[RMDB]
RNA sequence: GGGAACGACUCGAGUAGAGUCGAAAAGAUAUGGAAAUGUGUAGACAUGCUUGACAUUCGGAAACGAAUGGAGAGCAACAGCUACCAUUUCCUAAGUCAAAGAUUAUCGGCCUUCGGGCCGAUAAUCCAUGGUAAUGAUGUUCGCAUCAUUACCAUGAAAAGAAACAACAACAACAAC
Reactivity to 2A3 in 0.01 (KOAc 150mM, MgCl2 10mM, bicine 150mM(pH8.5), 24C), signal-to-noise 7, nucleotides 027 to 126: g000a010u020a010u050g000g060a050a000a020u030g240u050g010u050a010g040a060c190a300u300g020c000u010u010g000a020c000a010u010u000c000g000g000a020a010a000c010g010a000a010u000g010g000a040g010a000g020c060a030a010c050a010g000c000u010a000c000c000a000u000u000u000c000c000u010a010a000g010u000c050a250a090a030g010a000u010u000a000u010c000g000g000c010c000u090u180c300g050g010g000c000c000g000a000u000a000a000u030c000
Reactivity to DMS in 0.01 (KOAc 150mM, MgCl2 10mM, bicine 150mM(pH8.5), 24C), signal-to-noise 9, nucleotides 027 to 126: g000a010u000a110u010g000g000a010a010a000u000g000u020g020u000a000g010a020c100a300u010g010c000u000u000g000a300c000a010u000u000c000g010g000a030a030a070c000g010a010a010u000g000g000a300g000a000g010c000a060a040c290a100g000c000u000a010c000c000a010u000u000u000c000c000u000a010a060g000u000c010a140a090a170g000a010u000u000a000u000c000g010g010c000c000u000u010c290g040g010g020c000c000g010a000u000a000a000u000c000

Structure probing data (2A3 and DMS) for a 177-nucleotide construct. DMS adducts were read by reverse transcription with MarathonRT. The data come from the RNA Mapping Database (RMDB), library TTRDES. Conditions: 150 mM KOAc, 10 mM MgCl2 and 150 mM bicine (pH 8.5), 24 C.